[RMDB]
RNA sequence: GGGAACGACUCGAGUAGAGUCGAAAAAGCCGCUGCAAUACCAUUUUCUUUAGCUCUUCAGGCACGUUUGAACUAUGUGGCAUUGCAGACUGAUGUUUUGCAAGAAAAUCAGAAAAUUCUUGCUGCAUCUUUUAAUAAAGCAAUGACUAACAUUGUCCCCUCUCUCUAAAUUCGUUUAGAGAGAGGGAAAAGAAACAACAACAACAAC
Reactivity to 2A3 in 0.01 (KOAc 150mM, MgCl2 10mM, bicine 150mM(pH8.5), 24C), signal-to-noise 5, nucleotides 027 to 156: a000g110c040c030g000c020u030g010c020a040a070u020a090c010c010a050u050u060u170u110c040u050u150u100a030g000c030u030c040u230u180c100a070g020g110c050a020c090g080u030u070u110g060a060a030c030u020a040u230g020u020g010g000c000a000u000u000g000c000a010g010a060c020u020g000a000u010g020u020u210u300u100g020c000a000a020g010a010a070a040a100u180c100a070g120a110a090a050a030u080u000c000u000u000g000c000u000g000c000a010u010c000u010u120u050u090a110a160u100a070a070a020g010c000a000a040u090g090a160c090u120a160a030c020a040u110u150g060u140c010
Reactivity to DMS in 0.01 (KOAc 150mM, MgCl2 10mM, bicine 150mM(pH8.5), 24C), signal-to-noise 1, nucleotides 027 to 156: a160g000c070c050g030c010u000g030c000a050a020u010a030c030c000a070u000u010u010u010c110u030u010u020a050g010c010u020c050u000u040c180a120g030g030c090a100c070g000u030u000u000g010a030a020c050u020a070u010g030u000g010g030c010a020u000u000g000c020a120g020a100c050u000g030a040u000g020u000u000u030u000g000c020a040a080g000a060a020a060a140u010c060a300g000a150a150a180a280u000u000c000u000u000g010c010u010g030c000a060u020c010u000u000u010u000a030a170u000a060a070a120g010c030a050a030u000g010a170c090u030a060a200c060a080u000u010g000u000c050

This 207-nucleotide RNA was probed chemically with 2A3 and DMS. For 2A3 the reverse transcriptase was SuperScript II with manganese. The data come from the RNA Mapping Database (RMDB), library OK3TST.